[RMDB]
RNA sequence: GGGAACGACUCGAGUAGAGUCGAAAACGAGCUGGCCGACGACGUGGCCGGCUCGCCGGUCGAGCUGACGACCUACGACCACGUGCCGGCUCGCGUGCAGCUGCCGGCCGCGUUCGUCGUGGCCGGCGGCUAUUGCCUUGUUCGCAAGGCAAUAGCCAAAAGAAACAACAACAACAAC
Reactivity to DMS in 0.01 (KOAc 150mM, MgCl2 10mM, bicine 150mM(pH8.5), 24C), signal-to-noise 8, nucleotides 027 to 126: c040g000a050g010c010u000g000g030c040c120g000a090c120g010a210c070g030u000g000g010c000c000g010g010c040u000c030g020c070c130g010g000u000c020g010a070g010c060u010g010a140c170g000a080c120c030u010a080c030g000a050c030c050a150c030g010u010g000c010c010g000g010c010u000c040g000c020g010u000g000c060a060g000c030u000g010c000c010g000g010c000c000g010c000g020u000u010c200g010u000c010g030u000g010g020c000c000g000g000c010
Reactivity to 2A3 in 0.01 (KOAc 150mM, MgCl2 10mM, bicine 150mM(pH8.5), 24C), signal-to-noise 7, nucleotides 027 to 126: c030g000a010g010c010u020g050g040c060c060g100a140c050g040a040c030g060u080g020g000c000c000g000g000c000u010c000g000c010c040g050g040u090c010g010a020g030c050u090g100a090c050g100a150c050c020u040a140c020g050a040c000c030a030c040g030u080g030c000c010g020g000c040u050c050g020c010g030u100g050c030a030g010c020u070g000c000c000g000g050c010c000g000c000g010u060u110c130g120u070c000g000u020g000g000c000c010g000g010c000